[RMDB]
RNA sequence: GGGAACGACUCGAGUAGAGUCGAAAACGCGUACCAGGUGUUGAAACGUGGCGGUGUGAAGGAGGAGAACAUCAUCGUCAUGAUGCAGGAUGACAUUGCCCACAACUACAUGAACCCCCACCCUGGCGGUGUCGUUAACUUUCGAGUUAACGACACCAAAAGAAACAACAACAACAAC
Reactivity to 2A3 in 0.01 (KOAc 150mM, MgCl2 10mM, bicine 150mM(pH8.5), 24C), signal-to-noise 1, nucleotides 027 to 126: c050g000c050g120u070a080c000c020a040g040g030u040g030u040u100g140a020a080a060c000g020u050g010g030c020g000g020u040g000u010g070a070a070g050g080a040g030g040a070g020a070a010c010a020u080c000a020u000c010g080u060c030a000u070g020a010u080g020c040a000g020g050a020u100g000a010c000a010u060u100g020c020c080c030a060c040a040a100c000u220a000c030a170u090g120a070a060c030c000c080c000c020a040c020c010c010u000g000g000c000
Reactivity to DMS in 0.01 (KOAc 150mM, MgCl2 10mM, bicine 150mM(pH8.5), 24C), signal-to-noise 1, nucleotides 027 to 126: c150g010c090g000u030a040c060c040a020g020g040u000g010u070u040g000a040a140a170c140g000u000g030g010c030g000g000u000g000u000g000a100a090g000g010a140g000g000a110g000a060a080c100a090u000c020a010u000c100g030u010c070a060u000g020a160u000g040c150a000g010g000a070u000g000a070c100a100u020u000g000c090c020c060a090c020a060a040c090u010a070c120a050u000g000a030a270c020c090c010c020c000a210c150c030c040u000g010g010c300
This 177-nucleotide RNA was probed chemically with 2A3 and DMS. The DMS profile rests on 666 reads. The 2A3 profile rests on 1,002 reads. The reactions ran in a buffer of 150 mM KOAc, 10 mM MgCl2 and 150 mM bicine (pH 8.5), at 24 C. For 2A3 the reverse transcriptase was SuperScript II with manganese. DMS adducts were read by reverse transcription with MarathonRT.